[RMDB]
The record gives the reactivity of an RNA of 177 nucleotides to DMS and 2A3. The RNA was probed in 150 mM KOAc, 10 mM MgCl2 and 150 mM bicine (pH 8.5) at 24 C. For 2A3 the reverse transcriptase was SuperScript II with manganese. The 2A3 profile rests on 4,394 reads. Source: RMDB library M2PK50, as collected in RNAgym. The DMS profile rests on 6,341 reads.
RNA sequence: GGGAACGACUCGAGUAGAGUCGAAAAAGUCUACUUUUCGAAGUAGACUGUGCUCCCACUUGAUCGAGGUCUCACCGUGUCAUUGCCCACGACACACGGGCGUAAUAGAUUGGUUCGCCAAUCUAAAUACACUUUGUUCUUUCGAGAACAAAGUGUAAAAAGAAACAACAACAACAAC
Reactivity to DMS in 0.01 (KOAc 150mM, MgCl2 10mM, bicine 150mM(pH8.5), 24C), signal-to-noise 5, nucleotides 027 to 126: a020g000u000c000u000a000c000u000u000u000u020c160g000a020a020g010u000a000g000a010c000u000g020u010g030c190u000c010c010c000a140c170u000u000g000a060u010c040g010a090g000g000u000c030u000c050a110c060c030g000u000g000u000c060a180u000u010g000c030c000c020a120c160g010a100c160a040c070a080c110g010g000g010c120g000u000a070a100u000a000g000a020u000u000g000g010u000u010c230g020c000c000a010a020u000c000u000a010a060a160
Reactivity to 2A3 in 0.01 (KOAc 150mM, MgCl2 10mM, bicine 150mM(pH8.5), 24C), signal-to-noise 3, nucleotides 027 to 126: a000g000u010c000u000a010c010u040u050u070u120c200g050a010a000g000u000a000g010a000c010u000g000u060g010c020u020c020c010c000a030c040u070u200g080a130u070c040g050a030g000g100u040c040u010c070a050c030c030g000u020g000u020c050a080u020u250g030c000c000c020a050c050g060a020c010a010c010a020c080g000g040g000c030g000u040a100a090u010a090g010a010u000u000g010g030u030u040c200g040c030c000a000a000u000c000u000a020a030a000